[RMDB]
RNA sequence: GGGAACGACUCGAGUAGAGUCGAAAAUUAGAGACUUUGAUGCAAUUAAGUGGGAUACCGACUGGAAUAUCUCAUCAACUAGGGCUAGAAUUCAAAUCAGGUCUCUGCUCAAGCAUAUCUUAUGCCGGGACCCACGUAGGUUCGCCUACGUGGGUCCAAAAGAAACAACAACAACAAC
Reactivity to 2A3 in 0.01 (KOAc 150mM, MgCl2 10mM, bicine 150mM(pH8.5), 24C), signal-to-noise 1, nucleotides 027 to 126: u080u200a000g000a000g000a010c020u270u000u260g000a000u080g000c080a300a200u020u080a300a000g040u010g000g000g000a000u000a000c000c000g300a300c300u300g000g120a020a030u040a000u000c000u000c000a100u240c000a190a240c000u200a000g100g090g000c040u000a000g040a000a220u170u090c160a080a000a000u000c000a000g000g000u000c000u000c000u000g000c000u000c000a000a000g100c000a000u020a000u010c000u260u000a000u040g050c030c000g060

This 177-nucleotide RNA was probed chemically with 2A3.
For 2A3 the reverse transcriptase was SuperScript II with manganese.